[RMDB]
The record gives the reactivity of an RNA of 177 nucleotides to DMS. Conditions: 150 mM KOAc, 10 mM MgCl2 and 150 mM bicine (pH 8.5), 24 C. It was measured as part of the RMDB library TTRINS. DMS adducts were read by reverse transcription with MarathonRT. Reactivities are given for positions 27 through 126.
RNA sequence: GGGAACGACUCGAGUAGAGUCGAAAAGAUAUGGAAACUGACGAAGUGCUGGUCGAUGAAAUAGAUAAACCUCGUCGGAAACGACGAGGUUUAUCUAUGGAGACCUGCAUCGAAGUUUCCUAAGUCACCUAGUCUAGAUGUUCGCAUCUAGACUAGGAAAAGAAACAACAACAACAAC
Reactivity to DMS in 0.01 (KOAc 150mM, MgCl2 10mM, bicine 150mM(pH8.5), 24C), signal-to-noise 3, nucleotides 027 to 126: g000a070u010a300u020g000g000a020a010a010c000u000g000a260c170g010a100a120g000u000g010c000u010g010g010u000c010g040a110u020g000a130a120a010u000a000g010a000u000a010a010a000c000c000u000c010g010u000c000g020g000a090a120a240c010g000a000c000g020a010g000g010u000u000u000a000u000c000u010a000u000g010g010a050g000a000c010c000u000g010c000a030u010c000g010a300a020g020u000u000u000c000c000u000a040a110g010u010c050a250